[RMDB]
RNA sequence: GGGAACGACUCGAGUAGAGUCGAAAACUUGGGAAGAGGAAGAAAGAGAGGCUCCAAGAGUAGUAGGACUGGGAACAUAUGAGAAAGCAUGAGCUCUAUCCAUCUAUCCAUCCCCUCCCAUUCGCUAACCCGAUAGUAUGUUCGCAUACUAUCGGGUAAAAGAAACAACAACAACAAC
Reactivity to 2A3 in 0.01 (KOAc 150mM, MgCl2 10mM, bicine 150mM(pH8.5), 24C), signal-to-noise 8, nucleotides 027 to 126: c030u060u100g010g010g010a050a050g040a070g060g030a030a030g020a040a150a000g090a000g020a020g020g020c010u030c040c020a090a020g040a020g100u110a010g010u030a040g020g090a070c080u050g060g000g030a060a040c050a050u130a100u180g110a100g080a110a090a010g060c050a060u120g030a010g020c000u000c010u020a040u000c010c010a020u000c010u040a160u000c010c020a060u030c020c000c000c000u010c010c000c010a020u060u090c050g010c120u050a030
Reactivity to DMS in 0.01 (KOAc 150mM, MgCl2 10mM, bicine 150mM(pH8.5), 24C), signal-to-noise 4, nucleotides 027 to 126: c060u020u010g000g020g010a080a050g010a100g010g030a170a060g000a050a110a110g000a110g080a100g010g000c050u010c020c080a080a090g000a180g010u000a050g040u000a150g000g010a070c050u010g010g000g010a050a080c070a100u010a020u020g020a080g000a120a090a110g000c090a060u020g000a080g020c000u000c020u000a080u010c020c030a140u000c030u000a060u000c030c030a110u020c040c030c020c010u000c000c000c000a080u000u020c050g010c170u020a080